[RMDB]
RNA sequence: GGGAACGACUCGAGUAGAGUCGAAAAGAUAUGGAUACCCAAGCUUUUGACGCUCAUUCGGAAACGAAGUGAGCGAUAAGCUUGGUAUCCUAAGUCAAACGACCCAAGUGUUCGCACUUGGGUCGAAGUAUUGACUGGAGUUCGCUCCAGUCAAUACAAAAGAAACAACAACAACAAC
Reactivity to 2A3 in 0.01 (KOAc 150mM, MgCl2 10mM, bicine 150mM(pH8.5), 24C), signal-to-noise 1, nucleotides 027 to 126: g020a000u030a010u070g000g000a010u030a000c100c050c110a000a000g010c020u250u230u190u300g210a050c060g010c000u040c000a020u020u000c010g010g010a040a060a030c000g030a040a110g290u030g110a020g000c010g000a030u030a050a000g010c010u000u000g000g000u000a000u010c000c000u010a090a000g030u000c070a120a060a080c000g030a000c020c000c020a000a000g000u010g030u080u240c300g040c190a000c000u080u000g000g000g030u000c000g000a000a000
Reactivity to DMS in 0.01 (KOAc 150mM, MgCl2 10mM, bicine 150mM(pH8.5), 24C), signal-to-noise 2, nucleotides 027 to 126: g010a050u010a270u010g010g010a010u000a000c190c040c090a000a010g020c000u000u000u000u010g000a200c060g010c000u000c000a020u010u000c000g040g000a100a050a160c000g010a010a000g020u000g000a000g010c000g010a040u010a000a000g000c000u000u000g000g030u000a000u000c000c000u000a000a080g000u000c040a140a080a280c030g020a000c000c000c000a000a010g010u000g020u000u020c240g020c000a000c000u000u000g010g000g000u000c000g000a010a030